The record gives the reactivity of an RNA of 207 nucleotides to 2A3. Conditions: 150 mM KOAc, 10 mM MgCl2 and 150 mM bicine (pH 8.5), 24 C. Values cover nucleotides 27 to 156. It was measured as part of the RMDB library OK3TST.
[RMDB]
RNA sequence: GGGAACGACUCGAGUAGAGUCGAAAACGGUGAAGUAAAACAACGAAAUGCUGCCGCCAAUGAGCUCACCCGACGCGUGGACACCAAAAUGGCGGAGUUGCGCGGUUUGAGACACGACAUUCAACGAUUCGGCGAGGACAGUGCCGAUUUGAUCAUGUCUUCCGGGUAGUUUCGACUACCCGGAAGAAAAAGAAACAACAACAACAAC
Reactivity to 2A3 in 0.01 (KOAc 150mM, MgCl2 10mM, bicine 150mM(pH8.5), 24C), signal-to-noise 1, nucleotides 027 to 156: c020g020g010u070g140a140a000g010u070a030a070a000a070c090a050a180c000g000a090a000a050u130g000c000u000g070c000c000g030c040c000a140a040u130g130a000g000c000u000c020a090c000c080c000g110a010c130g100c000g110u030g090g020a000c000a090c050c050a060a000a000a140u040g030g020c000g020g020a000g080u250u100g000c000g000c000g000g000u000u070u080g030a030g000a000c020a000c000g040a000c030a020u100u220c150a300a100c050g000a020u000u040c000g000g000c050g000a000g160g000a050c020a090g120u080g140c030c030g000a000u000u000u000g000a040u120c110a050u020g010